[RMDB]
An RNA of 177 nucleotides, treated with 2A3 and DMS and read out base by base. The RNA was probed in 150 mM KOAc, 10 mM MgCl2 and 150 mM bicine (pH 8.5) at 24 C. The 2A3 profile rests on 942 reads.
RNA sequence: GGGAACGACUCGAGUAGAGUCGAAAAUUGAUGAGCCUACAUCUGCAUUGGAUCCUUUUUCUACCUCUGCGUUUAAACGUCUUUUGGAAUCUUUGAGAGACCAAAAUCUGACCUUAGGUGUCUCCACUCCGAUCAUUCAGUUCGCUGAAUGAUCGGAAAAAGAAACAACAACAACAAC
Reactivity to 2A3 in 0.01 (KOAc 150mM, MgCl2 10mM, bicine 150mM(pH8.5), 24C), signal-to-noise 1, nucleotides 027 to 126: u130u150g070a050u040g010a060g090c040c030u070a040c030a020u080c050u090g090c000a040u000u060g030g030a110u050c000c030u040u100u030u050u050c040u060a100c000c010u000c000u040g040c010g050u070u040u150a110a190a070c000g020u000c000u050u010u000u010g020g010a060a080u000c040u160u120u220g300a300g010a010g000a100c000c080a030a020a030a020u010c080u050g050a050c000c020u010u020a040g040g000u040g050u020c030u000c070c010a070c070
Reactivity to DMS in 0.01 (KOAc 150mM, MgCl2 10mM, bicine 150mM(pH8.5), 24C), signal-to-noise 1, nucleotides 027 to 126: u000u000g000a030u000g020a150g030c030c020u020a120c070a080u010c050u000g040c010a050u020u010g020g040a100u010c010c020u000u000u000u000u040c080u040a090c050c010u000c020u000g020c070g070u020u010u010a040a070a140c150g030u010c040u000u000u000u000g010g000a000a270u000c020u000u000u010g010a140g020a010g010a270c010c000a020a010a050a020u010c160u020g000a090c010c060u000u000a050g000g000u010g000u000c040u000c020c040a160c280
Values cover nucleotides 27 to 126.